Conditions: 150 mM KOAc, 10 mM MgCl2 and 150 mM bicine (pH 8.5), 24 C.
Structure probing data (2A3) for a 207-nucleotide construct.
Reactivities are rounded to 0.1 and cut off at 0 and 3.
For 2A3 the reverse transcriptase was SuperScript II with manganese.
RNA sequence: GGGAACGACUCGAGUAGAGUCGAAAAGCUGUUACAUUCUUGGGACUGCAUUUCGAUGCGAAGGAAUGGGAUGCUAUAAUAUUUCUGAGAAUUUUCAAUAUCUAAAAAUUCCCGCCUAUCACAAGACGUCAGUUACUGAACAUAUUCUUCUGGAGAGGUUCUAAGCUUACUUCGGUAAGCUUAGAACAAAAGAAACAACAACAACAAC
Reactivity to 2A3 in 0.01 (KOAc 150mM, MgCl2 10mM, bicine 150mM(pH8.5), 24C), signal-to-noise 2, nucleotides 027 to 156: g000c040u020g040u110u080a040c010a050u180u000c010u040u050g040g070g020a090c100u120g000c030a020u090u060u130c110g060a050u060g090c030g120a130a050g000g060a060a030u210g000g010g010a000u010g000c060u030a010u030a070a080u050a110u020u170u020c110u080g060a030g010a180a130u120u150u110u140c030a060a060u060a140u100c050u140a030a020a160a150a060u030u010c000c000c010g000c020c020u080a080u140c030a040c060a090a010g010a000c010g000u000c020a050g010u020u060a100c040u050g020a060a000c030a010u110a100u030u010c000u050u010c040u160g060g060a070g040a030g240